[RMDB]
RNA sequence: GGGAACGACUCGAGUAGAGUCGAAAAGAAACAGGAUCGACAAGGGUGUAAAGAUCGCUCUUUUACUCGGCAUGAUACCACCGUUAUCGGGUAAACAGAGUAGUUGCAAAUGACAACAAUGCUCAGGAAGGGGUAGCACCGUUCGCGGUGCUACCAAGUUUGGAUCACACUUCGGUGUGAUCCAAACAAAAGAAACAACAACAACAAC
Reactivity to 2A3 in 0.01 (KOAc 150mM, MgCl2 10mM, bicine 150mM(pH8.5), 24C), signal-to-noise 1, nucleotides 027 to 156: g030a000a120a010c060a030g040g080a070u030c010g050a050c150a010a100g050g020g010u040g030u070a120a090a030g100a080u070c030g000c010u000c000u060u050u000u000a030c000u020c020g030g050c080a080u060g040a010u220a100c030c120a050c020c090g030u030u040a040u050c020g000g020g000u010a010a000a000c120a000g000a000g000u000a010g030u020u030g020c000a050a130a220u190g030a060c010a000a010c000a000a040u040g040c020u020c070a010g040g040a100a030g000g090g000g000u000a000g040c000a000c010c000g000u010u000c120g040c010g070g000u000g030c000u030a000c000c000a000a000
Chemical mapping of a 207-nucleotide RNA with 2A3. The data come from the RNA Mapping Database (RMDB), library M2RFPK. Values cover nucleotides 27 to 156. 2A3 is a SHAPE reagent: it acylates the 2'-hydroxyl of flexible nucleotides of all four kinds. For 2A3 the reverse transcriptase was SuperScript II with manganese. Conditions: 150 mM KOAc, 10 mM MgCl2 and 150 mM bicine (pH 8.5), 24 C.